The record gives the reactivity of an RNA of 177 nucleotides to 2A3 and DMS. For DMS, 4,483 sequencing reads were counted. Values cover nucleotides 27 to 126. The reactions ran in a buffer of 150 mM KOAc, 10 mM MgCl2 and 150 mM bicine (pH 8.5), at 24 C. It was measured as part of the RMDB library OK1LIB. For 2A3 the reverse transcriptase was SuperScript II with manganese.

RNA sequence: GGGAACGACUCGAGUAGAGUCGAAAAAGGAUUUAUUGAGAAUGGAAGUCAGGCCAGAUUAAUGCUGCCACCGGAAGUUGAGUAGACGGUGCUGCCUGCGGCUCAACCCCAGGAGGACUGGGUGACCAAGCAUUAAAAGCUUCGGCUUUUAAUGCUUAAAAGAAACAACAACAACAAC
Reactivity to 2A3 in 0.01 (KOAc 150mM, MgCl2 10mM, bicine 150mM(pH8.5), 24C), signal-to-noise 3, nucleotides 027 to 126: a020g230g030a090u130u140u050a120u130u260g060a140g100a060a070u120g150g070a000a000g000u000c010a000g010g020c050c000a000g020a060u050u270a210a020u300g080c010u000g000c000c010a000c010c000g030g000a140a050g000u010u000g000a020g010u020a000g000a010c010g000g000u000g020c010u000g010c000c000u010g000c000g000g000c000u000c010a000a000c000c000c000c000a000g030g050a050g130g080a020c020u080g000g000g000u000g010a000c070c040
Reactivity to DMS in 0.01 (KOAc 150mM, MgCl2 10mM, bicine 150mM(pH8.5), 24C), signal-to-noise 2, nucleotides 027 to 126: a080g010g000a070u010u000u010a090u070u020g000a110g020a100a060u010g010g010a070a010g000u000c000a000g000g000c010c000a020g000a070u010u060a100a080u070g020c020u000g010c010c000a020c020c030g020g000a110a110g010u010u000g000a010g000u000a040g040a100c020g000g000u000g000c000u010g000c000c000u000g000c000g010g040c000u000c020a000a010c000c000c010c010a040g000g000a160g020g000a260c000u010g010g010g020u030g000a110c100c090